[RMDB]
RNA sequence: GGGAACGACUCGAGUAGAGUCGAAAAAUCGCGAUAUUAUAAUUAAUAUCGCGAUAUGCAUCGGCGCCGGCAUGCUACGAUUAGCUACGGCCGUAAUAUCGAUAUCGCGGCGCCGAUCGCGCGCGCGCGGUUGAUACGAUUUCGAUCGUAUCAACCGAAAAGAAACAACAACAACAAC
Reactivity to 2A3 in 0.01 (KOAc 150mM, MgCl2 10mM, bicine 150mM(pH8.5), 24C), signal-to-noise 2, nucleotides 027 to 126: a010u010c010g000c000g000a000u000a020u030u090a140u060a300a300u300u050a020a000u010a000u000c000g000c000g000a000u000a000u030g000c000a000u010c000g000g000c000g010c000c010g100g090c070a080u110g030c070u080a090c030g040a040u060u040a010g000c000u010a060c210g150g010c010c030g040u020a060a030u050a010u060c020g060a030u020a040u150c040g000c000g000g000c000g020c000c000g000a000u000c020g000c000g000c020g000c000g060c010g020
Reactivity to DMS in 0.01 (KOAc 150mM, MgCl2 10mM, bicine 150mM(pH8.5), 24C), signal-to-noise 3, nucleotides 027 to 126: a020u000c000g000c000g000a020u000a000u000u010a030u010a180a210u010u000a010a010u000a000u020c000g020c000g000a000u000a000u010g000c030a030u000c020g000g000c010g000c010c000g010g020c040a050u010g030c130u000a030c070g010a040u000u000a090g010c030u000a090c160g040g000c010c270g020u010a040a050u000a020u000c030g000a150u000a040u010c050g010c010g010g010c000g040c000c000g000a000u000c070g030c020g030c170g020c160g010c180g030